Structure probing data (DMS and 2A3) for a 177-nucleotide construct.
Source: RMDB library RFM100, as collected in RNAgym.
DMS adducts were read by reverse transcription with MarathonRT.
The RNA was probed in 150 mM KOAc, 10 mM MgCl2 and 150 mM bicine (pH 8.5) at 24 C.
RNA sequence: GGGAACGACUCGAGUAGAGUCGAAAACGAAGCCCCUCUUCGGAGCACUGUGCAGCUAGGCCCCUUGGAGGGCGGCAACGCCCGGGCCUCUGAGGUCCUGGAGCUGUCCUGCGGGCCCAGCGCUCAGUGAACUCAGUGAAUUCGUUCACUGAGUUCAAAAAGAAACAACAACAACAAC
Reactivity to DMS in 0.01 (KOAc 150mM, MgCl2 10mM, bicine 150mM(pH8.5), 24C), signal-to-noise 3, nucleotides 027 to 126: c130g010a210a110g000c040c010c020c030u020c030u010u010c070g010g000a060g020c130a090c000u020g000u000g000c010a110g060c020u000a080g000g000c010c010c000c260u020u020g010g020a040g000g000g010c010g000g000c020a110a130c300g000c070c000c010g000g000g000c000c000u000c110u050g010a100g010g000u000c000c000u010g000g000a150g010c000u000g000u000c010c000u010g000c130g000g000g000c000c000c070a020g010c000g000c010u010c000a010g020
Reactivity to 2A3 in 0.01 (KOAc 150mM, MgCl2 10mM, bicine 150mM(pH8.5), 24C), signal-to-noise 6, nucleotides 027 to 126: c050g050a040a000g070c010c010c010c010u020c020u030u070c110g070g010a010g030c050a010c030u010g020u030g000c100a100g000c110u010a010g000g000c000c000c020c040u050u130g120g130a030g010g020g000c000g000g000c050a100a100c100g120c000c000c030g000g000g000c050c010u050c080u260g130a120g000g000u020c000c000u020g000g010a030g010c010u010g030u020c000c000u120g060c070g000g000g000c000c000c000a000g000c000g010c000u010c000a020g000